[RMDB]
RNA sequence: GGGAACGACUCGAGUAGAGUCGAAAAGAAAGAGGCAGAGUUGAACCGUACAACCAUCACCAAGCUUUUUGAUGAGACGUGUGAUGCAAUUCGAGACAGGAUGCACACAUUAACUGUGGUUACGUAGUUUUCCAAAAAGUCUCGAUGCCCGCUUUGGUAGAAGACUAUCAUUCGUGAUAGUCUUCUAAAAAGAAACAACAACAACAAC
Reactivity to DMS in 0.01 (KOAc 150mM, MgCl2 10mM, bicine 150mM(pH8.5), 24C), signal-to-noise 4, nucleotides 027 to 156: g000a050a070a130g010a120g040g020c020a180g010a090g020u010u000g000a040a080c050c050g020u000a090c050a040a090c030c050a160u000c010a030c000c020a050a070g010c260u000u000u000u000u000g020a050u000g000a090g000a110c140g000u010g010u000g000a090u000g000c020a030a100u000u000c030g010a110g020a110c080a210g000g000a090u000g000c040a070c030a030c040a060u010u000a040a090c140u010g020u000g020g010u010u000a060c060g020u000a070g010u000u000u000u000c040c050a020a060a070a090a130g000u000c000u000c020g010a100u010g010c000c020c030g000c040u000u000u000g000g030
Reactivity to 2A3 in 0.01 (KOAc 150mM, MgCl2 10mM, bicine 150mM(pH8.5), 24C), signal-to-noise 4, nucleotides 027 to 156: g040a010a060a010g030a020g020g010c040a010g020a030g130u040u060g040a080a030c030c010g030u080a030c020a030a010c020c010a010u050c010a010c040c030a120a090g090c060u150u150u070u170u180g150a160u190g020a050g010a040c040g050u070g020u000g110a080u000g000c050a080a210u040u000c020g020a020g040a080c050a040g010g030a030u050g000c030a010c000a000c000a060u100u170a110a030c130u080g020u030g090g020u060u040a000c060g000u030a020g030u070u050u120u140c030c010a000a100a110a000a020g010u000c000u010c000g000a020u080g000c000c000c000g030c020u030u030u030g070g000

Source: RMDB library OK3TST, as collected in RNAgym.
The record gives the reactivity of an RNA of 207 nucleotides to DMS and 2A3.
Conditions: 150 mM KOAc, 10 mM MgCl2 and 150 mM bicine (pH 8.5), 24 C.